RNA sequence: GGGAACGACUCGAGUAGAGUCGAAAAGCUCUCAAUCUGGAACUUGCGGUACGAAUGGGCAACAAGUACACGCACAGCCCAUCCAACCUUACCCGUCUGAAAGCAGCUCUGAGUAAAGCACAGAACAAGGCUCAAGUCUGGAAGAUGCUGACGAAGGGGUCGUACUAAUUUUCGAAUUAGUACGACCAAAAGAAACAACAACAACAAC
Reactivity to 2A3 in 0.01 (KOAc 150mM, MgCl2 10mM, bicine 150mM(pH8.5), 24C), signal-to-noise 4, nucleotides 027 to 156: g030c020u010c000u000c040a060a190u040c060u070g050g020a060a090c030u050u100g020c030g030g010u020a040c050g030a140a070u080g030g020g030c030a050a030c050a210a090g020u120a060c150a020c090g040c040a070c060a030g030c020c010c000a000u040c050c020a050a060c010c020u030u060a060c020c000c010g040u010c020u040g100a120a070a020g020c010a010g020c040u000c020u100g050a040g030u080a010a120a030g040c030a050c030a130g090a060a030c050a100a080g060g000c010u020c050a030a060g020u010c050u040g040g000a020a000g030a060u100g010c020u040g010a020c030g050a030a040g060g030
Reactivity to DMS in 0.01 (KOAc 150mM, MgCl2 10mM, bicine 150mM(pH8.5), 24C), signal-to-noise 2, nucleotides 027 to 156: g010c020u000c010u000c030a090a180u000c040u010g030g000a030a060c030u000u000g010c050g070g010u010a120c090g010a070a080u010g010g010g060c010a120a140c050a040a220g000u000a080c130a140c060g050c020a030c030a140g010c020c000c020a060u000c030c030a110a070c020c040u020u010a050c020c020c040g010u000c030u000g010a100a120a090g020c020a060g040c050u000c040u000g050a230g010u000a040a030a020g000c020a160c030a120g020a000a090c060a120a080g000g030c010u010c030a010a110g030u020c050u010g000g010a110a050g000a110u010g020c020u000g000a110c000g020a090a120g030g000
Description: Chemical mapping of a 207-nucleotide RNA with 2A3 and DMS. For 2A3 the reverse transcriptase was SuperScript II with manganese.